[RMDB]
RNA sequence: GGGAACGACUCGAGUAGAGUCGAAAAACACCGAAGGGCCAGGUCAGUGGCCCAUUUGCAGACUGCGACAGCCAUCACAGACCAAGGUAUCGUGCCACGGCAUGUUCCACCUUGGCCAUUUGGUCACGUCAUCUGUCUCCUUCGGGGGACAGAUGGCAAAAGAAACAACAACAACAAC
Reactivity to DMS in 0.01 (KOAc 150mM, MgCl2 10mM, bicine 150mM(pH8.5), 24C), signal-to-noise 8, nucleotides 027 to 126: a110c080a120c020c010g010a130a090g010g000g010c010c010a060g000g020u020c150a080g020u000g000g010c010c010c010a000u010u010u020g000c060a070g010a080c080u020g000c040g000a090c160a150g010c010c010a040u010c110a090c170a120g000a080c010c010a030a030g000g020u010a050u010c050g020u000g000c000c020a100c240g030g000c010a020u010g000u000u010c100c110a060c020c000u000u000g000g000c030c030a060u020u020u010g010g020u000c090a110c130
Reactivity to 2A3 in 0.01 (KOAc 150mM, MgCl2 10mM, bicine 150mM(pH8.5), 24C), signal-to-noise 9, nucleotides 027 to 126: a000c080a060c010c020g030a110a160g020g000g000c010c000a020g040g090u170c080a070g100u030g040g000c000c000c000a000u010u000u020g010c010a010g060a150c060u080g020c030g050a040c040a020g010c010c000a040u070c030a050c050a110g050a050c010c000a020a010g030g000u030a030u100c030g010u030g000c000c030a070c120g060g000c010a010u040g040u100u010c050c020a020c010c010u010u020g000g000c000c000a060u050u050u080g020g010u060c040a010c110